Source information: This 177-nucleotide RNA was probed chemically with DMS and 2A3. For 2A3, 1,307 sequencing reads were counted. Conditions: 150 mM KOAc, 10 mM MgCl2 and 150 mM bicine (pH 8.5), 24 C.

RNA sequence: GGGAACGACUCGAGUAGAGUCGAAAAAGGGGCUUUUUCCUUUGUAAGCCCCAUUUGACUGGAUAUUCAAGGGUUUACGAGCAGAAAUGGUAUGAUUGCAAGGUUCGAAACUAAUUAAAUACCCUAGCCUUAGGACGACAUUCGUGUCGUCCUAAGGAAAAGAAACAACAACAACAAC
Reactivity to DMS in 0.01 (KOAc 150mM, MgCl2 10mM, bicine 150mM(pH8.5), 24C), signal-to-noise 2, nucleotides 027 to 126: a060g000g020g000g000c030u000u000u000u030u050c050c080u010u020u070g000u010a050a080g000c000c020c000c020a000u000u010u010g000a130c030u030g000g020a040u010a000u020u040c070a050a050g000g010g000u000u010u010a110c000g020a020g000c030a030g020a050a040a020u020g020g020u000a060u010g000a050u030u020g030c090a100a100g000g000u000u000c020g010a090a020a020c070u020a020a100u030u010a040a070a050u000a020c040c000c000u020a150g000
Reactivity to 2A3 in 0.01 (KOAc 150mM, MgCl2 10mM, bicine 150mM(pH8.5), 24C), signal-to-noise 3, nucleotides 027 to 126: a000g050g010g010g020c180u040u010u000u000u080c080c080u170u010u050g030u170a020a040g010c000c010c000c000a000u020u020u050g040a020c100u000g020g150a030u000a000u120u020c070a030a010g150g010g000u000u100u010a050c000g010a050g000c000a000g120a240a140a240u010g040g000u240a040u280g080a220u120u040g000c030a080a070g060g000u000u010c020g050a000a040a000c040u010a100a090u140u300a080a010a000u120a040c000c000c010u040a080g020